Background:
Chemical mapping of a 177-nucleotide RNA with 2A3 and DMS. Reactivities are given for positions 27 through 126. It was measured as part of the RMDB library 15KREP. The reactions ran in a buffer of 150 mM KOAc, 10 mM MgCl2 and 150 mM bicine (pH 8.5), at 24 C.
RNA sequence: GGGAACGACUCGAGUAGAGUCGAAAAUGGAGGGAGACAGCCACCGGGAUAGGACAGAGAAAUCACCUCCAGAGGACCCCUUCAGCGAACAUGAAGCGCACUGAGCCGCCAGGAUGAGUCCAUAGCGCCUUAAACUAAACUUCGGUUUAGUUUAAGGAAAAGAAACAACAACAACAAC
Reactivity to 2A3 in 0.01 (KOAc 150mM, MgCl2 10mM, bicine 150mM(pH8.5), 24C), signal-to-noise 3, nucleotides 027 to 126: u050g020g000a020g020g020g000a100g020a020c030a040g050c000c020a030c020c010g060g030g050a070u130a140g020g020a050c070a060g070a020g030a080a080a030u040c020a080c040c000u000c000c000a010g040a040g000g030a070c020c000c000c000u030u050c040a020g020c000g050a040a020c010a060u110g050a090a020g020c030g030c030a010c040u020g030a010g020c030c000g030c040c000a020g020g020a060u080g040a020g060u030c010c020a030u050a030g050c040g010
Reactivity to DMS in 0.01 (KOAc 150mM, MgCl2 10mM, bicine 150mM(pH8.5), 24C), signal-to-noise 4, nucleotides 027 to 126: u010g030g000a060g000g010g000a150g030a100c140a110g020c050c030a050c030c050g010g000g010a110u010a070g010g010a110c090a090g010a120g010a070a080a120u010c050a110c010c010u000c000c020a040g010a110g000g000a140c050c010c020c050u000u000c030a050g000c040g010a040a040c080a110u010g010a090a040g000c090g000c040a080c080u000g000a110g000c040c030g000c030c040a040g010g000a060u000g010a090g000u000c010c040a060u000a090g010c160g050